[RMDB]
RNA sequence: GGGAACGACUCGAGUAGAGUCGAAAAACUAUGAAGAAAGAGUUAAAACAUCCUGAGAAUGCUAGUAAGUAUGUAUUUUUGAAAGGACUUCCAAAAUUUGAGUUUAAAGAGGUAAACUCCUUUUACAUGACAAAGUUACUUAGAAACACUACUGCUACGGAUUAAUACUAUUCGUAGUAUUAAUCCGAAAAGAAACAACAACAACAAC
Reactivity to DMS in 0.01 (KOAc 150mM, MgCl2 10mM, bicine 150mM(pH8.5), 24C), signal-to-noise 1, nucleotides 027 to 156: a170c010u000a070u020g020a120a170g000a130a100a090g020a130g020u000u010a020a090a090a120c060a090u000c030c030u000g010a120g030a090a080u000g000c090u000a080g000u000a100a090g020u000a020u020g020u000a040u000u000u000u010u020g000a050a060a000g000g010a040c040u010u000c050c030a070a090a060a090u000u020u050g010a230g020u010u000u000a030a040a090g020a040g020g000u000a050a090a080c010u000c020c010u000u000u000u000a020c050a120u000g020a120c050a020a020a040g000u000u000a020c000u000u000a160g000a090a030a060c040a010c020u010a020c000u000g020c010u010a080
Reactivity to 2A3 in 0.01 (KOAc 150mM, MgCl2 10mM, bicine 150mM(pH8.5), 24C), signal-to-noise 3, nucleotides 027 to 156: a010c050u050a050u190g040a050a180g050a060a120a060g050a010g020u040u110a030a060a050a120c010a050u020c020c000u060g030a070g100a170a060u140g030c020u020a040g010u030a150a060g000u010a080u110g020u010a110u070u040u010u040u050g050a030a000a000g010g000a020c020u040u020c070c020a050a110a070a060u110u130u200g010a010g030u020u050u050a070a150a040g190a030g040g000u030a030a040a030c020u050c010c000u020u040u040u060a110c080a070u090g050a060c030a050a050a010g030u020u030a030c000u020u060a030g050a010a050a010c060a000c060u050a010c000u090g000c000u100a010